An RNA of 177 nucleotides, treated with DMS and 2A3 and read out base by base. The reactions ran in a buffer of 150 mM KOAc, 10 mM MgCl2 and 150 mM bicine (pH 8.5), at 24 C. For 2A3 the reverse transcriptase was SuperScript II with manganese. For DMS, 2,265 sequencing reads were counted. For 2A3, 2,607 sequencing reads were counted. The data come from the RNA Mapping Database (RMDB), library RFM100. Reactivities are given for positions 27 through 126.
RNA sequence: GGGAACGACUCGAGUAGAGUCGAAAACGGGUGAAGUUCGUCGGCAGCGGUGCCGCGCGUCGGCGCGACAUGCACUGCACAUCGGCUCUGGAGAACACCCUCGGGUGCCACCUGAUGUGAGCUGUCCCCAUCAGGUGCUGUUCGCAGCACCUGAUGGAAAAGAAACAACAACAACAAC
Reactivity to DMS in 0.01 (KOAc 150mM, MgCl2 10mM, bicine 150mM(pH8.5), 24C), signal-to-noise 2, nucleotides 027 to 126: c150g000g020g010u000g000a120a070g050u000u000c000g030u020c030g000g000c070a070g040c050g010g010u040g050c080c050g000c030g000c030g030u060c180g060g030c000g040c060g000a000c080a100u010g000c030a070c000u000g000c010a040c040a040u000c020g010g070c020u010c060u060g020g000a160g000a100a300c050a030c040c000c000u040c230g000g020g010u000g000c020c030a050c070c000u010g050a020u000g000u040g000a120g000c010u000g000u000c030c060
Reactivity to 2A3 in 0.01 (KOAc 150mM, MgCl2 10mM, bicine 150mM(pH8.5), 24C), signal-to-noise 3, nucleotides 027 to 126: c030g040g000g000u020g050a080a020g020u030u070c050g010u030c020g050g000c020a110g000c050g010g060u070g070c050c030g020c000g020c010g090u180c100g070g010c030g040c020g000a040c010a030u210g000c000a030c000u040g000c030a010c000a030u010c000g010g000c000u010c010u020g030g000a090g020a030a000c020a030c010c000c030u040c120g060g000g000u020g020c010c000a150c020c050u030g010a030u040g020u000g010a020g020c050u050g040u100c010c010